RNA sequence: GGGAACGACUCGAGUAGAGUCGAAAAUCGCAAGAGGAGAUCAGGUUUGCAAUAUGAUGACGAGGUAGAAUUUGUGCGCACCUUUGCGCCUCGAAGACCUUAUCAGUGGAAAGGUCGCAAAGUCAAGAGAGUAUUGCGCCCCGGCACUGUGGUGACAUAUGAUGGACAAGUUCGCUUGUCCAUCAUAAAAAGAAACAACAACAACAAC
Reactivity to DMS in 0.01 (KOAc 150mM, MgCl2 10mM, bicine 150mM(pH8.5), 24C), signal-to-noise 2, nucleotides 027 to 156: u000c070g020c040a080a090g020a120g010g020a150g070a040u000c020a090g040g010u000u000u020g000c090a090a130u000a110u000g010a120u000g020a070c030g020a040g010g010u000a080g020a060a080u000u000u010g010u010g000c000g010c020a090c140c090u000u000u000g000c000g010c010c020u010c020g000a080a300g010a060c010c020u000u000a080u000c100a080g030u000g010g010a130a030a040g000g010u000c040g010c050a000a030a090g020u000c060a010a190g010a150g000a230g030u010a080u000u010g010c030g020c040c020c000c010g020g000c040a030c040u000g040u000g000g030u000g000a100c050a180
Reactivity to 2A3 in 0.01 (KOAc 150mM, MgCl2 10mM, bicine 150mM(pH8.5), 24C), signal-to-noise 3, nucleotides 027 to 156: u070c030g020c070a040a060g000a020g090g010a050g000a070u060c040a020g000g020u020u080u110g010c010a060a010u100a100u100g110a100u080g010a050c030g010a020g020g060u110a060g100a170a130u090u120u120g110u100g010c030g010c000a060c020c040u070u100u190g020c010g000c020c000u000c030g070a040a010g030a010c000c020u080u070a130u220c030a060g090u130g070g060a090a000a010g000g000u030c010g040c050a020a040a000g040u050c050a060a010g070a020g000a000g160u100a080u060u040g000c020g000c000c000c000c020g060g000c020a010c080u020g000u050g030g040u010g030a000c010a020

About this RNA:
Conditions: 150 mM KOAc, 10 mM MgCl2 and 150 mM bicine (pH 8.5), 24 C. Structure probing data (DMS and 2A3) for a 207-nucleotide construct. High DMS reactivity at an A or C suggests that its Watson-Crick edge is free. Values cover nucleotides 27 to 156. For DMS the reverse transcriptase was MarathonRT. The data come from the RNA Mapping Database (RMDB), library OK3TST.